This 177-nucleotide RNA was probed chemically with 2A3 and DMS.
The 2A3 profile rests on 6,043 reads.
2A3 adducts were read by reverse transcription with SuperScript II with manganese.
The DMS profile rests on 4,339 reads.

RNA sequence: GGGAACGACUCGAGUAGAGUCGAAAAGAUAUGGAGCUAGGAUAAGCGAUAAGCUUUGGUUCGGAAACGAACCUGAGCUUUUGACGCUUACUAGCUCCUAAGUCAAAGAAGAGGUUCGCCUCUUCAAGGAUUAAACAAUCUUCGGAUUGUUUAAUCCAAAAGAAACAACAACAACAAC
Reactivity to 2A3 in 0.01 (KOAc 150mM, MgCl2 10mM, bicine 150mM(pH8.5), 24C), signal-to-noise 3, nucleotides 027 to 126: g010a020u020a020u070g000g010a010g000c020u020a020g090g220a300u090a190a000g000c030g110a110u050a300a010g000c020u010u000u010g010g020u010u010c010g000g030a010a020a030c020g000a010a010c020c000u000g020a000g000c010u000u000u080u200g100a030c020g000c000u020u000a010c000u000a010g000c000u010c000c000u000a000a010g010u010c010a100a020a000g000a010a000g010a010g060g020u120u160c260g170c080c000u000c020u020u000c000a000a030
Reactivity to DMS in 0.01 (KOAc 150mM, MgCl2 10mM, bicine 150mM(pH8.5), 24C), signal-to-noise 3, nucleotides 027 to 126: g010a030u000a180u000g000g000a020g020c000u000a000g010g010a260u000a010a000g020c010g020a140u010a010a010g000c000u000u000u000g010g010u000u000c000g030g000a040a040a100c010g010a000a010c000c000u000g010a000g010c000u000u010u010u000g000a210c100g010c000u010u000a060c010u000a010g000c000u000c000c010u000a000a070g000u000c030a130a140a200g000a010a010g010a020g010g020u000u010c300g020c010c000u000c000u000u000c010a080a150